Source information:
Structure probing data (2A3 and DMS) for a 177-nucleotide construct.
RNA sequence: GGGAACGACUCGAGUAGAGUCGAAAAGUGUGAACCUCAAACCUAAUGUGGUGGCUGCUGCUGCUGCUGCUUUGCUGCUUCAGUAGCGUCCAGCCGGAGACAUGACGGGCGGCCUCAUGCCCAUGGGCCCCUAGAGCCAAUUCGUUGGCUCUAGGGGAAAAGAAACAACAACAACAAC
Reactivity to 2A3 in 0.01 (KOAc 150mM, MgCl2 10mM, bicine 150mM(pH8.5), 24C), signal-to-noise 1, nucleotides 027 to 126: g130u070g000u040g070a060a080c010c030u000c090a010a120a140c000c030u100a130a040u130g080u080g090g140u070g020g000c000u010g000c000u010g000c000u000g000c000u000g000c000u000g000c010u160u080u230g140c150u030g000c000u030u000c000a010g030u040a010g020c000g010u020c030c000a010g000c000c040g030g030a040g000a000c020a020u020g040a020c080g030g020g050c040g010g060c040c030u060c010a030u070g070c000c020c040a030u090g050g000g030
Reactivity to DMS in 0.01 (KOAc 150mM, MgCl2 10mM, bicine 150mM(pH8.5), 24C), signal-to-noise 2, nucleotides 027 to 126: g010u000g040u020g010a070a090c060c010u010c120a080a160a200c030c000u000a110a030u000g030u000g000g030u010g010g000c010u000g010c150u000g020c020u000g010c020u000g020c010u000g010c020u000u010u040g050c170u010g000c010u010u000c000a000g020u000a010g010c000g020u000c240c020a040g000c000c000g020g030a190g000a090c020a000u000g000a090c190g000g000g020c110g000g000c050c010u000c050a070u000g000c020c000c010a060u010g010g010g020

Values cover nucleotides 27 to 126.